Source information: Chemical mapping of a 177-nucleotide RNA with 2A3 and DMS. For 2A3, 888 sequencing reads were counted. 2A3 adducts were read by reverse transcription with SuperScript II with manganese. Reactivities are rounded to 0.1 and cut off at 0 and 3.

[RMDB]
RNA sequence: GGGAACGACUCGAGUAGAGUCGAAAAGGUAGCAGAGAAGAGACUAGGCUUCAGACUAGAUAGUAUCACACUACUGGUACAUAGUAGAGACAUACAUAGAUGGGUAUGACACAUCAGAGCUGCCAUGAUACCGUCAUCACUUCGGUGAUGACGGUAUAAAAGAAACAACAACAACAAC
Reactivity to 2A3 in 0.01 (KOAc 150mM, MgCl2 10mM, bicine 150mM(pH8.5), 24C), signal-to-noise 1, nucleotides 027 to 126: g040g000u090a030g000c130a050g040a030g030a200a020g000a010g030a080c050u090a050g070g000c000u060u060c110a050g090a100c010u030a000g040a050u080a080g050u010a030u060c070a020c050a050c130u080a000c010u050g020g070u090a050c030a030u100a070g010u020a010g030a030g000a120c010a010u040a000c050a010u080a110g110a090u120g020g000g050u100a050u150g000a000c010a020c010a090u100c050a000g030a030g090c040u060g010c000c000a010u050g020
Reactivity to DMS in 0.01 (KOAc 150mM, MgCl2 10mM, bicine 150mM(pH8.5), 24C), signal-to-noise 2, nucleotides 027 to 126: g020g030u000a010g000c030a120g030a150g020a120a070g030a100g030a190c060u010a070g000g030c040u000u030c090a030g000a090c030u000a020g000a120u020a080g020u000a080u010c130a060c220a120c060u000a030c020u000g020g010u000a060c080a050u010a030g010u010a060g000a110g000a140c150a050u000a020c050a080u070a110g020a070u000g020g000g000u010a000u000g010a070c150a000c080a110u000c030a090g010a080g020c020u000g000c020c020a080u000g000